[RMDB]
RNA sequence: GGGAACGACUCGAGUAGAGUCGAAAAAGAUCGAUUACGAUCGAUCAAUGAUGCCCCUCACCCACCUCUGAAGAUCCCGGGUGGGCGAGGGAACGGAGCACGGGAUCACGAGCAGUACGCUGCUCGAAAAAGAACUAGACCUUCGGGUCUAGUUCAACCUAGGCUAUGUCUUCGGACAUAGCCUAGGAAAAGAAACAACAACAACAAC
Reactivity to 2A3 in 0.01 (KOAc 150mM, MgCl2 10mM, bicine 150mM(pH8.5), 24C), signal-to-noise 1, nucleotides 027 to 156: a010g000a000u000c010g000a000u070u060a060c140g000a000u000c000g000a010u010c000a000a200u220g080a040u300g100c020c000c000c000u000c000a010c000c000c000a000c000c000u080c110u140g110a140a030g000a000u020c000c000c020g010g000g000u000g010g020g000c020g000a000g020g010g000a020a010c150g140g090a190g130c140a050c090g000g000g000a000u030c040a000c010g000a000g000c000a000g000u050a050c300g060c140u000g000c000u000c000g000a030a000a000a000a000g000a000a000c000u000a000g000a000c000c000u050u090c300g080g000g060u040c000u000a000g000u000u000c000a000a000
Background: Chemical mapping of a 207-nucleotide RNA with 2A3. Conditions: 150 mM KOAc, 10 mM MgCl2 and 150 mM bicine (pH 8.5), 24 C. For 2A3, 544 sequencing reads were counted. 2A3 is a SHAPE reagent: it acylates the 2'-hydroxyl of flexible nucleotides of all four kinds. 2A3 adducts were read by reverse transcription with SuperScript II with manganese. It was measured as part of the RMDB library M2RFPK.